RNA sequence: GGGAACGACUCGAGUAGAGUCGAAAAGCUUUUUUUUCGGAUUAGGCGUGGAGGCGAAAGUCACCCUCCUCGCAUCGCAAGUUCGUGCUUACGACUUACACGUAGGGCGAGGGGUGGGCGAAAGUUGAAAACACGAUGUUGUUCGCAACAUCGUGAAGUCUUUUAGGGAAUUCGUUCCCUAAAAGACAAAAGAAACAACAACAACAAC
Reactivity to 2A3 in 0.01 (KOAc 150mM, MgCl2 10mM, bicine 150mM(pH8.5), 24C), signal-to-noise 3, nucleotides 027 to 156: g060c050u150u060u090u050u000u000u110u140c090g030g030a070u090u090a080g030g010c020g010u020g000g030a020g040g000c090g040a110a050a050g110u130c020a050c000c000c020u020c000c000u010c030g000c030a030u050c030g030c020a010a030g030u170u130c040g010u070g100c070u120u190a030c020g040a030c070u020u100a020c060a020c090g050u110a100g030g010g040c020g050a050g000g020g030g020u210g000g010g070c040g040a100a040a020g040u060u080g030a040a070a020a040c000a000c010g000a000u000g010u000u000g030u020u030c140g010c080a010a000c000a010u000c000g000u000g000a000a000